[RMDB]
RNA sequence: GGGAACGACUCGAGUAGAGUCGAAAAAAAAAGGUGCCGAUGCGCGCUAAGGUGCCAAAGCUGCCCAUGACCUGUAAGGUGGCAAACAGGUCAAUUUCCAAACGCGAAAGCGAAAGCGCGCAAAAAAGUGAUAUUCUUUGUUCGCAAAGAAUAUCACAAAAGAAACAACAACAACAAC
Reactivity to DMS in 0.01 (KOAc 150mM, MgCl2 10mM, bicine 150mM(pH8.5), 24C), signal-to-noise 1, nucleotides 027 to 126: a010a000a070a170a120g010g030u000g000c040c000g010a090u000g050c000g020c010g010c010u010a250a110g000g020u000g000c000c000a080a110a160g000c100u000g000c000c000c060a280u000g030a010c000c000u000g000u000a100a120g020g000u010g000g030c070a060a130a000c000a000g000g010u000c010a030a020u000u000u000c070c030a120a160a080c050g010c010g010a160a100a190g010c040g000a060a140a010g010c020g050c010g010c020a000a030a040a030a040a040

Notes
An RNA of 177 nucleotides, treated with DMS and read out base by base. For DMS the reverse transcriptase was MarathonRT. The RNA was probed in 150 mM KOAc, 10 mM MgCl2 and 150 mM bicine (pH 8.5) at 24 C.